[RMDB]
RNA sequence: GGGAACGACUCGAGUAGAGUCGAAAAAGAACUGCAGGCUUCAUCAUCUUCAAAGAGCACAGUCAGUUCUGUGCUCUUGAUGGGCACGACUGACUGUGUCCAUCUGAAGAUGGUGAAGCCUGUAUAGGCUUCUAGUGCAUUUCGAUGUAUUAGGAGCAAAAGAAACAACAACAACAAC
Reactivity to 2A3 in 0.01 (KOAc 150mM, MgCl2 10mM, bicine 150mM(pH8.5), 24C), signal-to-noise 2, nucleotides 027 to 126: a000g020a050a000c010u020g000c000a000g000g000c000u000u000c010a030u000c000a010u000c000u000u000c010a060a090a000g020a010g020c000a000c000a000g000u020c010a000g010u170u000c090u260g010u000g000c000u000c010u050u050g090a090u170g010g000g000c010a000c000g020a000c010u050g010a010c000u010g010u000g000u010c020c000a050u010c010u010g000a000a000g000a000u010g000g000u000g010a000a000g000c010c000u000g000u000a010u010a010g010
Reactivity to DMS in 0.01 (KOAc 150mM, MgCl2 10mM, bicine 150mM(pH8.5), 24C), signal-to-noise 5, nucleotides 027 to 126: a050g010a130a130c110u010g010c000a000g000g010c000u000u000c000a000u000c000a010u000c000u000u000c000a060a050a090g010a160g010c000a010c000a010g000u000c050a030g000u020u030c080u040g040u000g010c000u000c000u010u040g010a070u050g010g010g000c000a000c010g000a040c070u000g000a020c020u010g010u000g000u000c020c030a160u000c100u000g000a000a000g000a000u000g010g010u000g000a000a000g010c000c000u000g000u010a000u020a050g020
The record gives the reactivity of an RNA of 177 nucleotides to 2A3 and DMS.
It was measured as part of the RMDB library OK1LIB.
Conditions: 150 mM KOAc, 10 mM MgCl2 and 150 mM bicine (pH 8.5), 24 C.